[RMDB]
RNA sequence: GGGAACGACUCGAGUAGAGUCGAAAAAGCUUCCAAUCAUGGCAGAAGGUGAACGGGGAGUAGGCAAACCACAUGGUGAGAGCAAGAGAGGGAGGAGUGGAAGGUCCCAGACUUUUAAACAAUCAGAUCUUGCAUGAAUUGAGCAAGAACUCACUCACCCUAAAUUUAUAUUCGUAUAAAUUUAGGGAAAAGAAACAACAACAACAAC
Reactivity to 2A3 in 0.01 (KOAc 150mM, MgCl2 10mM, bicine 150mM(pH8.5), 24C), signal-to-noise 3, nucleotides 027 to 156: a000g040c040u030u000c020c010a040a090u070c040a040u050g080g020c020a040g020a160a040g070g010u070g030a090a050c020g030g000g000g020a040g020u110a040g080g000c070a070a040a050c050c000a040c040a110u110g020g020u060g040a050g000a010g020c030a060a040g030a010g030a020g060g030g010a090g000g010a020g010u060g010g020a020a020g010g010u020c020c020c000a050g040a100c030u040u190u070u300a090a170a050c060a020a050u130c010a030g060a130u010c000u010u010g000c010a030u060g130a190a140u280u170g040a040g020c010a020a000g010a020a020c000u040c040a050c010u050c010a070
Reactivity to DMS in 0.01 (KOAc 150mM, MgCl2 10mM, bicine 150mM(pH8.5), 24C), signal-to-noise 1, nucleotides 027 to 156: a100g060c030u010u020c040c020a100a130u000c040a130u000g030g000c050a090g000a090a040g050g000u000g000a040a110c050g020g110g040g040a080g030u000a050g020g070c000a120a100a080c000c030a060c050a120u030g020g060u000g020a090g000a090g040c040a100a090g020a100g000a070g040g000g010a090g000g000a120g090u000g000g000a060a040g020g020u000c010c050c020a130g010a100c090u000u000u020u020a060a070a100c060a090a130u020c030a110g000a140u000c010u000u000g010c000a120u010g000a080a130u020u040g020a160g000c050a090a100g000a050a160c050u000c060a040c050u000c050a120